[RMDB]
RNA sequence: GGGAACGACUCGAGUAGAGUCGAAAAGUGACAAGUAACCAUAUGGGGGGCAUGAUUACUGCUUUUCUUAUGAUAUGUGCGAGUUUUAAGUGUUUUAAUAGGUAGAGAACUCAUUGAUAUCGUAGGGAAUAUUACGUUUGUUCGCAAACGUAAUAUUAAAAGAAACAACAACAACAAC
Reactivity to 2A3 in 0.01 (KOAc 150mM, MgCl2 10mM, bicine 150mM(pH8.5), 24C), signal-to-noise 4, nucleotides 027 to 126: g060u040g030a030c050a080a020g040u020a040a030c020c010a030u060a180u220g020g000g000g000g000g000c010a010u020g010a020u020u050a020c020u010g040c030u030u090u020u000c000u010u010a010u010g000a000u010a010u070g180u040g060c050g030a020g010u010u020u020u060a120a040g040u070g080u110u110u070u070a180a150u120a090g060g050u070a020g020a000g000a180a000c010u020c010a020u020u110g030a000u020a000u040c010g000u020a000g030g000g010
Reactivity to DMS in 0.01 (KOAc 150mM, MgCl2 10mM, bicine 150mM(pH8.5), 24C), signal-to-noise 9, nucleotides 027 to 126: g020u010g010a110c130a110a050g010u000a030a040c030c020a040u000a090u010g000g010g010g010g010g030c300a030u000g010a060u000u000a030c060u000g010c060u000u000u000u000c010u000u000a010u000g000a030u000a010u000g010u010g020c230g010a020g010u000u000u000u010a040a160g010u000g000u000u010u000u010a050a150u010a080g010g010u010a100g000a100g000a020a020c010u000c010a050u000u000g010a020u000a010u000c010g010u000a020g010g000g000
Structure probing data (2A3 and DMS) for a 177-nucleotide construct. DMS adducts were read by reverse transcription with MarathonRT. For 2A3 the reverse transcriptase was SuperScript II with manganese. The 2A3 profile rests on 4,584 reads. High 2A3 reactivity points to a flexible backbone, as in loops and unpaired stretches.